This 177-nucleotide RNA was probed chemically with DMS and 2A3.

[RMDB]
RNA sequence: GGGAACGACUCGAGUAGAGUCGAAAAUGCGCUUAGGCGGUAAAUUCGCAGACUAUCCGAGUGUUAUUACGCUUGAUUUUGUCUCGCCAACCCACCAAAAAUACGAUUUGAGUAUCGCUCUCAGGCAAUUUACCGCCGUAUUCGUACGGCGGUAAAUAAAAGAAACAACAACAACAAC
Reactivity to DMS in 0.01 (KOAc 150mM, MgCl2 10mM, bicine 150mM(pH8.5), 24C), signal-to-noise 2, nucleotides 027 to 126: u020g010c060g010c050u000u000a070g030g000c020g010g020u010a030a060a170u010u010c040g020c030a020g000a010c020u000a060u000c130c070g030a010g020u010g010u000u000a180u020u000a040c080g000c040u040u010g000a080u010u010u000u010g000u000c000u030c040g030c020c120a070a140c030c040c030a110c190c180a010a070a040a090a110u000a030c070g010a120u000u000u000g010a130g020u000a120u000c050g000c070u010c070u000c050a130g000g000c180a060
Reactivity to 2A3 in 0.01 (KOAc 150mM, MgCl2 10mM, bicine 150mM(pH8.5), 24C), signal-to-noise 1, nucleotides 027 to 126: u080g000c050g020c030u090u180a040g000g040c020g000g030u050a080a080a110u180u060c000g000c030a050g030a020c020u030a010u040c030c020g030a020g010u020g020u080u120a220u180u210a030c030g000c000u020u020g020a110u200u070u080u120g000u000c000u000c000g010c000c060a090a070c010c000c010a040c000c040a120a180a000a040a020u230a090c050g100a100u070u070u150g050a060g060u060a070u150c040g000c020u010c000u010c030a000g050g100c030a030